Chemical mapping of a 207-nucleotide RNA with 2A3 and DMS.
RNA sequence: GGGAACGACUCGAGUAGAGUCGAAAAUGAAGGCUCCGAGUUUUCGACAACGGUGACAACUUACAAGCGCUGAUAUGUCUGACAGCAGAUCCCCCACGCUGUCGUUGGUCGGUGAUCACGGGAGGAUUGCCGUAGUCGCUCGUCAGUGCGGAGUCCGACAAUGACGUCAAUUCGUUGACGUCAUUGUAAAAGAAACAACAACAACAAC
Reactivity to 2A3 in 0.01 (KOAc 150mM, MgCl2 10mM, bicine 150mM(pH8.5), 24C), signal-to-noise 3, nucleotides 027 to 156: u160g010a070a030g000g000c000u000c000c010g020a040g040u000u040u040u070c030g010a030c020a130a070c040g070g040u060g070a050c060a070a040c070u040u110a060c100a160a050g020c000g000c010u010g020a030u040a070u220g150u040c030u080g010a010c000a020g040c000a040g070a300u250c010c010c000c020c000a000c010g000c000u000g000u000c000g010u020u070g040g030u040c020g000g000u010g010a010u050c060a040c110g040g030g020a070g020g010a040u020u030g020c000c010g000u020a020g020u010c030g020c020u020c030g090u060c040a020g020u020g060c030g000g000a010g000u010c000c000g000
Reactivity to DMS in 0.01 (KOAc 150mM, MgCl2 10mM, bicine 150mM(pH8.5), 24C), signal-to-noise 1, nucleotides 027 to 156: u030g040a110a090g020g000c000u000c010c000g020a210g000u000u000u020u000c010g010a050c030a060a080c030g010g010u010g000a130c080a050a120c060u020u000a090c060a080a160g000c030g040c040u010g020a040u000a070u010g000u000c060u000g040a070c000a120g000c000a130g010a110u000c010c020c000c000c070a210c270g040c010u000g020u000c000g020u010u000g030g010u000c010g040g000u000g020a050u000c050a020c160g000g000g000a100g000g010a100u010u000g000c010c070g060u000a020g010u000c000g000c030u000c040g000u000c030a120g030u000g010c020g000g000a040g080u000c020c020g020

Conditions: 150 mM KOAc, 10 mM MgCl2 and 150 mM bicine (pH 8.5), 24 C. For DMS the reverse transcriptase was MarathonRT. Reactivities are given for positions 27 through 156.